[RMDB]
RNA sequence: GGGAACGACUCGAGUAGAGUCGAAAAGCACGCAACAAACAGAGAAGAGUCCAGUCCGGAGGGCAGAAAGCGCAGGAGGGCCUCCCCGCGCCGGCAGGAGAAGCCGGCGGGUGCAAGGAGGCGACACGACUUUACUAUAAUUCGUUAUAGUAAAGUCAAAAGAAACAACAACAACAAC
Reactivity to DMS in 0.01 (KOAc 150mM, MgCl2 10mM, bicine 150mM(pH8.5), 24C), signal-to-noise 9, nucleotides 027 to 126: g010c040a040c040g010c040a070a090c110a070a070a090c100a070g010a080g010a070a070g000a080g000u010c030c040a080g010u010c050c050g000g010a090g000g000g020c040a050g000a050a080a080g000c050g020c040a040g000g000a090g000g000g010c010c000u000c010c010c000c030g010c010g030c000c010g010g000c010a080g020g030a180g020a120a090g010c000c010g000g000c000g000g000g010u030g030c160a080a130g010g000a020g000g000c010g010a050c160a090c160
Reactivity to 2A3 in 0.01 (KOAc 150mM, MgCl2 10mM, bicine 150mM(pH8.5), 24C), signal-to-noise 9, nucleotides 027 to 126: g030c020a010c060g070c010a020a070c030a080a170a020c030a020g080a000g020a150a020g020a020g050u030c030c010a020g030u030c020c030g060g020a050g010g020g010c030a010g100a080a050a020g030c050g010c040a030g020g060a050g020g060g000c000c000u010c010c010c000c000g060c000g000c000c010g030g000c010a030g040g300a170g050a100a020g040c000c000g000g000c000g000g020g000u070g010c020a040a030g010g000a000g000g010c010g020a010c030a010c070

Structure probing data (DMS and 2A3) for a 177-nucleotide construct. Reactivities are given for positions 27 through 126. For DMS the reverse transcriptase was MarathonRT. The RNA was probed in 150 mM KOAc, 10 mM MgCl2 and 150 mM bicine (pH 8.5) at 24 C.